[RMDB]
RNA sequence: GGGAACGACUCGAGUAGAGUCGAAAACACAACUGCGAAGGGGGGACGGAGAAGGCUAUGUUGGCCGGGCGACCGUUGUCCCGGUUUAAGCGUGUAGGCUGGUUUUCCAGGCAAAUCCGGAAUUGAAUUAUCUAACUUGAUUCGUCAAGUUAGAUAAAAAAGAAACAACAACAACAAC
Reactivity to DMS in 0.01 (KOAc 150mM, MgCl2 10mM, bicine 150mM(pH8.5), 24C), signal-to-noise 8, nucleotides 027 to 126: c030a070c080a070a120c090u000g000c060g010a110a120g010g010g010g000g000g010a030c030g000g010a090g000a250a160g010g010c020u000a060u010g010u000u010g010g020c010c000g000g000g010c300g000a070c080c080g010u000u000g000u000c010c000c000g000g000u000u010u000a050a090g020c080g010u010g010u000a070g010g010c010u000g000g010u000u000u000u000c010c020a130g010g000c070a050a070a080u010c020c020g000g000a080a080u010u010g010a090a110
Reactivity to 2A3 in 0.01 (KOAc 150mM, MgCl2 10mM, bicine 150mM(pH8.5), 24C), signal-to-noise 2, nucleotides 027 to 126: c020a000c020a090a110c050u180g030c050g050a090a150g020g000g010g000g010g000a010c000g020g000a020g010a030a020g030g000c020u050a050u300g190u150u110g090g000c000c000g030g010g000c050g040a110c050c010g000u020u030g200u050c010c000c000g000g000u050u050u020a050a000g020c060g030u040g020u040a040g080g050c020u020g000g020u070u000u090u080c010c020a010g040g020c010a040a050a040u050c050c060g070g060a060a070u140u080g040a090a120

The record gives the reactivity of an RNA of 177 nucleotides to DMS and 2A3. The 2A3 profile rests on 2,923 reads. Reactivities are given for positions 27 through 126. 2A3 adducts were read by reverse transcription with SuperScript II with manganese.